[RMDB]
RNA sequence: GGGAACGACUCGAGUAGAGUCGAAAAAAAAAGCCAUUCACCUUUUGUGGCCAAUACUGAUCUGGAGACUGCCAUGGAGUCAUGGGUUUAACUCUGGCACAGUGAACCAGCCCCUGUGACACUGUGAUCAAUAACACGCAUUCGUGCGUGUUAUUGAAAAAGAAACAACAACAACAAC
Reactivity to 2A3 in 0.01 (KOAc 150mM, MgCl2 10mM, bicine 150mM(pH8.5), 24C), signal-to-noise 1, nucleotides 027 to 126: a000a000a000a000a000g030c060c000a040u160u070c160a290c090c060u080u120u200u220g040u030g010g000c030c000a120a040u080a150c040u190g100a150u000c020u020g030g010a030g060a080c030u050g020c050c010a040u020g020g080a150g100u180c030a040u030g180g000g000u070u110u030a100a040c010u000c020u010g030g000c000a000c020a030g010u050g040a060a040c000c000a010g060c000c000c040c010u030g080u060g010a010c020a000c010u000g030u060g070a010
Reactivity to DMS in 0.01 (KOAc 150mM, MgCl2 10mM, bicine 150mM(pH8.5), 24C), signal-to-noise 3, nucleotides 027 to 126: a030a010a060a040a050g010c010c010a030u010u010c070a090c110c100u000u000u000u000g020u000g010g000c030c070a090a070u000a050c050u000g000a070u000c030u010g020g010a120g000a080c110u000g000c030c020a030u010g020g000a100g000u010c030a030u000g000g000g010u000u010u000a100a070c050u000c030u000g000g010c050a060c040a030g020u010g010a100a090c100c040a070g000c060c020c020c070u010g010u010g010a190c040a030c040u000g020u000g010a170